Overview:
Chemical mapping of a 177-nucleotide RNA with DMS and 2A3. The reactions ran in a buffer of 150 mM KOAc, 10 mM MgCl2 and 150 mM bicine (pH 8.5), at 24 C.
[RMDB]
RNA sequence: GGGAACGACUCGAGUAGAGUCGAAAACUGAGACGCUUCGGCGUCUCAGAAAUGGAACACAGGCGAAGGAAGCAAGAGCUAUCAUGCCAAUGACGACGUGGAAAACUCAUACGUUCGCGUAUGAGAAGGUGAUGAGACAGUUCGCUGUCUCAUCACCAAAAGAAACAACAACAACAAC
Reactivity to DMS in 0.01 (KOAc 150mM, MgCl2 10mM, bicine 150mM(pH8.5), 24C), signal-to-noise 1, nucleotides 027 to 126: c020u000g000a040g000a000c010g040c000u000u000c120g080g020c000g000u000c000u030c000a000g000a000a040a130u010g000g020a120a050c040a020c000a010g060g000c090g010a210a080g040g010a110a140g010c050a060a050g000a050g000c080u000a030u000c080a080u000g000c010c030a070a120u000g000a080c090g000a080c130g040u000g000g000a030a080a070a160c000u000c000a020u000a020c040g020u000u020c180g040c000g000u010a000u000g030a010g020a060a010
Reactivity to 2A3 in 0.01 (KOAc 150mM, MgCl2 10mM, bicine 150mM(pH8.5), 24C), signal-to-noise 1, nucleotides 027 to 126: c010u020g030a010g000a000c000g010c000u060u050c170g110g020c020g000u000c000u010c000a020g000a000a000a000u020g040g070a080a000c020a000c060a070g020g000c030g040a090a020g080g010a010a020g060c100a120a070g030a090g080c000u010a090u220c010a060u160g000c030c000a000a020u070g020a020c040g000a000c090g040u050g080g000a050a020a020a020c000u030c000a010u020a010c000g000u000u040c220g030c000g050u030a010u020g020a040g020a010a010